[RMDB]
The record gives the reactivity of an RNA of 177 nucleotides to DMS. The RNA was probed in 150 mM KOAc, 10 mM MgCl2 and 150 mM bicine (pH 8.5) at 24 C. For DMS the reverse transcriptase was MarathonRT.

RNA sequence: GGGAACGACUCGAGUAGAGUCGAAAAAUCCUGCGAUCCGGCAAAAACGCCCGAGAAGUGAUCGCCGCCGUGAAGGACAAACUGGAAACGCUGAAAAGUAGUCUGCCGGAAGGCGUGGAGAUAGUUAACUUUACCGGUGUUUCGACACCGGUAAAGUAAAAGAAACAACAACAACAAC
Reactivity to DMS in 0.01 (KOAc 150mM, MgCl2 10mM, bicine 150mM(pH8.5), 24C), signal-to-noise 1, nucleotides 027 to 126: a080u010c000c000u000g050c050g020a090u010c010c010g010g070c010a040a150a130a220a130c210g010c000c010c110g000a070g030a120a090g040u000g030a020u000c010g020c010c060g000c010c100g000u040g000a160a050g000g000a140c080a040a060a060c050u040g010g020a110a090a100c100g000c040u000g000a020a070a100a070g000u000a040g020u030c120u050g000c040c000g000g040a150a120g000g000c040g010u000g000g030a030g030a130u010a050g000u030u020a050